[RMDB]
The record gives the reactivity of an RNA of 177 nucleotides to DMS. The reactions ran in a buffer of 150 mM KOAc, 10 mM MgCl2 and 150 mM bicine (pH 8.5), at 24 C. Reactivities are given for positions 27 through 126. The DMS profile rests on 648 reads.
RNA sequence: GGGAACGACUCGAGUAGAGUCGAAAACCGUUGCCGUUCGCGGCAACGGGAAGCAAGCAAGCAGCGCAACGAGACAAGACGAUUAUGAGAUCGCGCAUGCUGAAAAGCCACGCUUCGGCGUGGCUAAUUCGAAUGUGUGGUUCGCCACACAUUCGAAAAAAGAAACAACAACAACAAC
Reactivity to DMS in 0.01 (KOAc 150mM, MgCl2 10mM, bicine 150mM(pH8.5), 24C), signal-to-noise 1, nucleotides 027 to 126: c000c000g030u030u000g010c000c000g060u000u020c190g020c010g000g000c000a000a000c000g000g000g020a090a090g000c160a100a040g060c130a080a090g000c030a040g000c010g000c030a040a040c110g000a080g010a170c150a040a080g010a220c130g020a130u030u030a020u000g000a150g000a060u000c060g000c000g030c090a080u000g000c040u030g000a040a020a040a070g020c020c000a030c000g000c000u000u000c150g000g010c010g000u020g000g040c000u000a010a030